Structure probing data (2A3) for a 207-nucleotide construct.
The reactions ran in a buffer of 150 mM KOAc, 10 mM MgCl2 and 150 mM bicine (pH 8.5), at 24 C.
Source: RMDB library PDB130, as collected in RNAgym.
The 2A3 profile rests on 1,199 reads.
2A3 adducts were read by reverse transcription with SuperScript II with manganese.
RNA sequence: GGGAACGACUCGAGUAGAGUCGAAAAUUGCUGCACGUCUAGGGCGCAGUAGUCCAGGGUUUCCUUGAUGAUGUCAUACUUAUCCUGUCCCUUUUUUUUCCACAGCUCGCGGUUGAGGACAAACUCUUCGCGGUCUUUCCAGUGGGGAUCCGAUAUCGUAUUUAGUUGGGUUCGCCCAACUAAAUACAAAAGAAACAACAACAACAAC
Reactivity to 2A3 in 0.01 (KOAc 150mM, MgCl2 10mM, bicine 150mM(pH8.5), 24C), signal-to-noise 2, nucleotides 027 to 156: u090u040g000c030u030g010c060a030c080g070u040c070u110a100g010g050g050c030g020c040a010g020u010a010g010u010c040c040a040g010g010g010u050u120u060c030c000u070u040g030a050u040g010a020u120g120u070c060a020u050a140c030u070u060a010u090c010c050u010g030u010c000c000c000u090u040u030u000u000u000u030u080c010c010a030c020a010g000c030u030c040g000c030g060g100u080u060g000a000g050g000a070c110a110a220a090c020u010c000u040u040c010g000c010g000g030u030c020u070u090u060c080c030a050g000u030g010g020g020g020a020u010c020c070g080a070u030a080u240c090